[RMDB]
RNA sequence: GGGAACGACUCGAGUAGAGUCGAAAAAUGGCUGGGCGGGAGGGGCGCACGCGCCAGCGAACUUUACGGGACACAAUCCCCGACUGCGCGCUGCGGUCCCAGACCUGGAGAGUCUAGACGCGCGCUAUGUCCGGAAGAGUUUCGACUCUUCCGGACAAAAAGAAACAACAACAACAAC
Reactivity to 2A3 in 0.01 (KOAc 150mM, MgCl2 10mM, bicine 150mM(pH8.5), 24C), signal-to-noise 1, nucleotides 027 to 126: a020u150g010g000c060u030g030g030g000c000g010g000g060a140g000g010g010g050c020g060c000a080c100g000c000g000c000c030a000g000c020g000a050a000c000u080u120u060a080c000g000g030g050a020c020a000c010a120a070u160c000c040c000c000g110a130c010u070g000c120g000c000g030c070u020g000c020g030g000u110c000c000c010a000g000a080c000c000u060g050g000a120g000a000g100u060c010u080a110g000a080c020g010c000g000c000g010c000u070a030
Reactivity to DMS in 0.01 (KOAc 150mM, MgCl2 10mM, bicine 150mM(pH8.5), 24C), signal-to-noise 1, nucleotides 027 to 126: a040u000g000g040c030u050g040g020g000c090g000g000g000a120g010g000g000g000c000g000c080a070c080g010c000g000c000c000a030g010c000g000a050a120c110u000u100u110a060c020g000g020g030a050c050a100c300a080a260u000c000c000c000c000g000a190c060u010g000c120g010c000g020c000u000g020c070g000g030u000c000c000c050a050g010a100c030c050u000g010g070a180g000a210g070u000c000u010a100g050a190c010g030c050g010c150g000c050u000a210